[RMDB]
RNA sequence: GGGAACGACUCGAGUAGAGUCGAAAACUUCUUUCCGAGAAUUCCUUUGAUGUUCCCCAGCCAGGUAUUUUCAUCCUCUAGCCUCUUGAUCUUCUUCUUAACCUUCCGGAGUUCUCUCUCGAGUUCCUCUAACUUCUUUCUUCCGCUCACCCACUGCCAUAAAAUGUCGGUUCGCCGACAUUUUAUGAAAAGAAACAACAACAACAAC
Reactivity to 2A3 in 0.01 (KOAc 150mM, MgCl2 10mM, bicine 150mM(pH8.5), 24C), signal-to-noise 1, nucleotides 027 to 156: c020u100u070c000u070u080u010c030c040g020a080g020a150a150u060u100c060c030u100u070u160g040a060u110g020u020u000c000c000c010c010a010g010c020c020a010g020g020u060a140u060u110u080u190c030a110u060c020c000u040c020u030a030g050c000c020u030c000u060u090g040a080u080c010u050u000c010u050u020c000u050u070a050a070c020c000u070u000c000c050g030g000a060g080u210u050c020u000c000u000c010u000c020g020a020g000u030u040c050c010u020c000u010a020a110c010u050u050c000u060u130u040c040u110u010c000c020g000c020u040c020a060c020c030c000a030c080u110g010c010